[RMDB]
RNA sequence: GGGAACGACUCGAGUAGAGUCGAAAAGAUAUUAACGCGCGUGCUGUGUCUAACGCGAAUUACCCAGUUAUUUUCGACUUUACUCGAGUCGAUAUAGCGUGAUAUGACACAGUUAUCCGCGAACGAAGUUCAUAGUAGGUUUCGACCUACUAUGAACAAAAGAAACAACAACAACAAC
Reactivity to 2A3 in 0.01 (KOAc 150mM, MgCl2 10mM, bicine 150mM(pH8.5), 24C), signal-to-noise 4, nucleotides 027 to 126: g050a030u200a050u260u170a100a040c030g000c010g000c020g050u020g030c010u020g020u010g010u030c040u060a080a000c000g000c020g010a020a080u110u060a070c030c030c020a020g080u070u070a110u060u040u010u000c000g000a000c000u000u000u010a000c000u000c000g000a000g000u000c000g000a000u000a000u000a010g020c000g000u030g040a010u010a010u130g000a000c000a010c000a030g010u010u020a020u030c000c000g000c000g020a050a010c060g090a130a010
Reactivity to DMS in 0.01 (KOAc 150mM, MgCl2 10mM, bicine 150mM(pH8.5), 24C), signal-to-noise 5, nucleotides 027 to 126: g020a170u000a080u000u010a070a100c110g030c000g020c070g020u010g000c010u000g000u000g010u010c010u010a070a020c010g010c000g000a080a060u000u010a100c060c040c080a150g010u000u010a070u000u000u000u000c010g010a020c000u000u000u000a010c020u000c020g020a000g000u000c000g010a010u000a020u000a110g020c000g000u000g020a050u000a020u000g010a030c040a020c030a030g000u010u000a030u000c080c010g000c000g000a060a130c190g010a100a080

Structure probing data (2A3 and DMS) for a 177-nucleotide construct. For 2A3, 7,064 sequencing reads were counted. DMS adducts were read by reverse transcription with MarathonRT. For DMS, 5,970 sequencing reads were counted.